[RMDB]
RNA sequence: GGGAACGACUCGAGUAGAGUCGAAAAGCGUAAGGCGGCCACAGCAGAAGCAUUCACGUCGAAGCCGCUGUCAGAUUCUGGUGAAUCUGCGAUUUCUGCUGAAAUGCAGGCUGAAGAGACAGCCAAAGGGAUAUUUUACUUUCGAGUAAAAUAUCCCAAAAGAAACAACAACAACAAC
Reactivity to 2A3 in 0.01 (KOAc 150mM, MgCl2 10mM, bicine 150mM(pH8.5), 24C), signal-to-noise 8, nucleotides 027 to 126: g060c050g080u130a100a060g050g000c010g010g000c030c030a110c030a040g000c010a010g010a040a010g010c030a090u100u100c060a030c120g100u070c060g130a050a000g000c000c000g010c000u010g020u020c000a000g000a090u030u000c000u240g190g030u290g070a000a000u020c030u020g010c000g010a010u000u060u000c000u000g000c010u000g050a060a070a030u260g070c080a060g000g000c000u000g010a090a020g040a030g020a070c000a000g000c000c000a040a050a030
Reactivity to DMS in 0.01 (KOAc 150mM, MgCl2 10mM, bicine 150mM(pH8.5), 24C), signal-to-noise 4, nucleotides 027 to 126: g040c070g000u040a070a080g000g010c020g000g020c020c150a180c030a020g010c000a010g010a040a060g020c110a060u010u030c060a060c090g010u020c060g000a080a070g010c030c020g000c010u030g000u040c000a030g020a060u010u010c010u020g010g020u040g000a010a010u010c060u010g020c070g000a070u000u010u000c010u000g000c010u000g000a100a080a070u030g010c140a100g010g010c000u000g000a070a110g010a300g010a090c010a010g010c000c060a060a140a140
An RNA of 177 nucleotides, treated with 2A3 and DMS and read out base by base. DMS adducts were read by reverse transcription with MarathonRT. For 2A3 the reverse transcriptase was SuperScript II with manganese. For DMS, 7,229 sequencing reads were counted. It was measured as part of the RMDB library OK1LIB. The 2A3 profile rests on 8,056 reads.